[RMDB]
RNA sequence: GGGAACGACUCGAGUAGAGUCGAAAAAGCCUUCGGGCAAUGUGGUGUUCGGACUGACUUUCAUCGUUUGACCGUUCGUGUGAAGUCUCCUGAAACGGAGCGCGAUACAGGGUGACAGCCCCGUAUCGACCUAAUAGCCAUUCGUGGCUAUUAGGUCAAAAGAAACAACAACAACAAC
Reactivity to DMS in 0.01 (KOAc 150mM, MgCl2 10mM, bicine 150mM(pH8.5), 24C), signal-to-noise 7, nucleotides 027 to 126: a120g010c020c010u000u030c090g020g010g020c030a050a020u020g010u010g000g010u010g010u000u000c030g010g000a110c080u020g000a070c050u000u010u020c090a090u010c050g000u000u000u020g000a090c030c030g010u000u000c060g000u020g020u010g010a080a080g010u020c010u000c020c010u010g000a070a090a120c150g000g000a060g000c050g020c080g010a010u000a000c010a050g010g000g010u000g000a110c300a160g000c020c000c000c020g010u000a010u000c020
Reactivity to 2A3 in 0.01 (KOAc 150mM, MgCl2 10mM, bicine 150mM(pH8.5), 24C), signal-to-noise 7, nucleotides 027 to 126: a000g030c010c000u030u040c130g040g010g000c060a020a080u180g030u060g050g040u070g030u070u050c030g010g050a090c030u050g030a040c030u050u100u030c090a090u060c050g060u030u030u110g110a090c020c020g020u040u030c040g010u070g030u050g120a060a040g060u040c000u000c010c010u050g050a080a020a010c040g010g000a020g010c070g000c010g000a000u000a030c010a080g030g000g010u030g120a090c050a060g040c000c000c000c000g010u020a030u020c030

Record summary: An RNA of 177 nucleotides, treated with DMS and 2A3 and read out base by base. Conditions: 150 mM KOAc, 10 mM MgCl2 and 150 mM bicine (pH 8.5), 24 C. Reactivities are given for positions 27 through 126. The data come from the RNA Mapping Database (RMDB), libraries RFM100 and RFMREP.